[RMDB]
RNA sequence: GGGAACGACUCGAGUAGAGUCGAAAAGGUACGGAGUAUAAGCCACCGACAGGUGGUGUAUAGAUCAGCGCAAGAGCAGGUCUUGCUAGACCGGUACUUGGUCACGCGACCAAGUACAUUCGGUUGAAGACAGAUACGUGUUCGCACGUGUCUGUCUAAAAGAAACAACAACAACAAC
Reactivity to DMS in 0.01 (KOAc 150mM, MgCl2 10mM, bicine 150mM(pH8.5), 24C), signal-to-noise 9, nucleotides 027 to 126: g010g020u020a070c080g010g010a080g010u010a060u010a080a290g000c000c000a000c000c000g010a140c300a120g000g020u010g010g000u010g000u020a020u010a040g000a110u010c060a080g010c090g010c040a050a030g000a050g010c120a080g010g010u000c010u000u000g000c030u000a120g000a020c010c000g000g000u000a000c000u000u000g000g000u000c000a120c300g010c250g000a010c000c000a000a000g000u000a000c010a040u030u030c020g000g010u000u000g010a090
Reactivity to 2A3 in 0.01 (KOAc 150mM, MgCl2 10mM, bicine 150mM(pH8.5), 24C), signal-to-noise 8, nucleotides 027 to 126: g140g020u100a030c070g060g030a050g040u110a080u030a180a020g010c000c000a010c000c010g050a100c140a150g000g010u000g000g010u040g030u030a040u040a030g130a070u090c040a030g030c010g000c060a030a000g000a030g040c140a060g090g110u010c000u010u020g010c020u020a020g010a020c000c000g010g000u000a000c000u010u010g010g000u020c040a040c290g180c120g040a000c000c000a000a000g000u000a000c000a010u100u160c010g010g010u010u030g030a030
Source: RMDB library OK1LIB, as collected in RNAgym. The record gives the reactivity of an RNA of 177 nucleotides to DMS and 2A3. Conditions: 150 mM KOAc, 10 mM MgCl2 and 150 mM bicine (pH 8.5), 24 C. For 2A3 the reverse transcriptase was SuperScript II with manganese. For 2A3, 20,119 sequencing reads were counted. For DMS, 40,078 sequencing reads were counted.